[RMDB]
RNA sequence: GGGAACGACUCGAGUAGAGUCGAAAACGAGUACGCCGUCCACGUUGCCCCGUACACGCUCACAGCACGGCUAAUGUGGAGCAGCGUAUCAGCCGUGCAGUAGCACCACGCCGCCUCCGACAUGACACACCUAUGGGAUCUUCGGAUCCCAUAGGUGAAAAGAAACAACAACAACAAC
Reactivity to 2A3 in 0.01 (KOAc 150mM, MgCl2 10mM, bicine 150mM(pH8.5), 24C), signal-to-noise 2, nucleotides 027 to 126: c040g010a030g060u090a000c050g020c020c020g040u030c020c030a020c060g060u040u100g030c000c000c000c000g030u070a050c040a010c060g010c010u020c010a040c030a020g010c000a010c010g040g000c040u100a100a000u060g020u080g080g000a100g050c080a020g010c020g000u050a050u090c040a010g000c000c000g000u000g000c010a020g000u070a000g000c030a010c060c010a020c030g010c000c020g000c000c000u000c010c000g010a040c040a070u120g020a050c000a010
Reactivity to DMS in 0.01 (KOAc 150mM, MgCl2 10mM, bicine 150mM(pH8.5), 24C), signal-to-noise 3, nucleotides 027 to 126: c020g020a110g000u000a070c040g010c000c050g030u000c040c060a090c120g000u000u000g000c030c020c020c030g060u010a110c170a160c060g000c010u020c090a090c100a070g000c000a010c010g040g000c010u020a020a030u010g030u000g000g000a150g010c110a100g000c000g000u000a040u010c150a010g020c000c040g040u000g020c010a060g000u010a050g020c010a180c030c010a140c090g000c000c020g010c000c000u000c050c050g000a110c120a010u040g000a140c230a160